An RNA of 177 nucleotides, treated with DMS and 2A3 and read out base by base. For 2A3 the reverse transcriptase was SuperScript II with manganese. It was measured as part of the RMDB library OK2TRN. The reactions ran in a buffer of 150 mM KOAc, 10 mM MgCl2 and 150 mM bicine (pH 8.5), at 24 C.
RNA sequence: GGGAACGACUCGAGUAGAGUCGAAAAGGGCGUUCAUCGUGAGGACGUUCACAGAGAAGACACGGUUGGCAGCACCCCUCAGCGUCGGACCGAGACGUGGCCCCGAAGUAGCAGGGGCGGAAGUGGCGGAUAGUAUAGGAUUCGUCCUAUACUAUCCAAAAGAAACAACAACAACAAC
Reactivity to DMS in 0.01 (KOAc 150mM, MgCl2 10mM, bicine 150mM(pH8.5), 24C), signal-to-noise 9, nucleotides 027 to 126: g010g010g010c020g020u000u000c030a080u010c120g010u010g010a130g000g010a060c050g010u000u000c040a110c130a110g010a120g010a110a070g010a070c050a040c060g010g010u000u000g010g010c050a050g010c060a140c050c010c010c030u000c070a130g010c030g000u000c020g010g000a140c070c040g000a130g010a050c070g010u000g010g010c010c010c000c010g010a090a100g010u000a090g030c110a180g000g010g010g010c020g010g000a050a070g010u010g010g020c270
Reactivity to 2A3 in 0.01 (KOAc 150mM, MgCl2 10mM, bicine 150mM(pH8.5), 24C), signal-to-noise 9, nucleotides 027 to 126: g020g010g000c020g020u040u030c030a080u080c100g110u140g100a100g020g020a020c020g030u040u030c050a040c040a040g140a000g020a110a020g070a020c010a010c080g060g020u090u080g080g020c050a040g020c010a090c000c010c000c010u040c040a020g010c010g010u020c010g000g030a060c020c030g020a030g010a040c050g020u050g080g010c030c000c010c010g040a080a010g040u100a020g030c080a060g000g000g000g020c020g020g020a080a020g050u050g060g030c040